[RMDB]
RNA sequence: GGGAACGACUCGAGUAGAGUCGAAAAGGGGUCAGGACCUAUAAUCCGUGCUGUAGCAUCGAUCUAUACUGAAGCCUCCACGGUAUAGGGAGCUACACACGGGUAGGUCCUGACGGAGGCACCCAAAGUCCGGCAUCUGUUCGCAGAUGCCGGACAAUCCAGGAAGAGUAUUCGUACUCUUCCUGGAAAAAGAAACAACAACAACAAC
Reactivity to 2A3 in 0.01 (KOAc 150mM, MgCl2 10mM, bicine 150mM(pH8.5), 24C), signal-to-noise 1, nucleotides 027 to 156: g010g000g120g010u010c010a000g010g010a000c000c000u140a180u090a300a000u050c000c000g000u020g080c260u000g010u000a000g010c000a040u300c070g000a000u000c000u000a000u000a010c000u030g080a090a030g020c000c000u020c010c000a010c010g030g010u010a000u000a000g030g000g000a010g030c000u000a000c010a010c000a000c030g000g000g000u000a000g000g000u000c000c000u000g000a000c000g000g000a020g020g030c000a020c000c000c010a080a070a000g000u000c000c000g000g060c030a000u000c020u010g070u260u120c220g010c070a030g010a030u000g090c010c010g000g000a000c000a000a010
This 207-nucleotide RNA was probed chemically with 2A3. The reactions ran in a buffer of 150 mM KOAc, 10 mM MgCl2 and 150 mM bicine (pH 8.5), at 24 C. For 2A3, 1,136 sequencing reads were counted. 2A3 adducts were read by reverse transcription with SuperScript II with manganese. Source: RMDB library RNAMAK, as collected in RNAgym.